[RMDB]
Description: This 177-nucleotide RNA was probed chemically with 2A3 and DMS. The data come from the RNA Mapping Database (RMDB), library OK2TST. For 2A3, 798 sequencing reads were counted. Conditions: 150 mM KOAc, 10 mM MgCl2 and 150 mM bicine (pH 8.5), 24 C. 2A3 adducts were read by reverse transcription with SuperScript II with manganese.
RNA sequence: GGGAACGACUCGAGUAGAGUCGAAAAUAGUCGAUGGACAACUGGUUGAUAUUCCAGUACUAGAUAUGAUCGUGAUGGAGGGACGCAGUAGGCUAAGAGAUGCCAGUUAAUGGAUUCUGGUCUAAGCCUCUCUGUCGUUGUUCGCAACGACAGAGAGAAAAGAAACAACAACAACAAC
Reactivity to 2A3 in 0.01 (KOAc 150mM, MgCl2 10mM, bicine 150mM(pH8.5), 24C), signal-to-noise 1, nucleotides 027 to 126: u070a030g110u020c080g020a080u140g100g000a020c030a140a000c060u020g030g050u090u050g180a200u110a110u250u000c000c010a000g000u040a090c090u050a010g060a080u020a070u260g080a040u070c000g060u000g030a090u070g010g040a040g000g070g010a030c080g000c040a040g080u140a030g000g000c020u000a100a000g030a000g110a030u290g110c000c010a020g030u080u180a130a080u130g000g090a000u040u060c020u000g130g000u000c010u020a030a030g000c000
Reactivity to DMS in 0.01 (KOAc 150mM, MgCl2 10mM, bicine 150mM(pH8.5), 24C), signal-to-noise 2, nucleotides 027 to 126: u000a080g000u000c020g020a160u000g010g010a120c130a070a090c020u000g000g010u000u010g010a110u010a120u020u000c010c010a030g010u000a120c150u000a060g020a070u030a100u010g030a070u010c040g000u000g000a100u010g010g010a070g030g010g010a070c160g010c060a080g000u000a020g000g010c010u000a040a080g000a100g020a050u000g000c010c000a020g010u010u000a090a130u020g000g000a120u010u000c010u000g010g020u000c010u000a060a070g010c100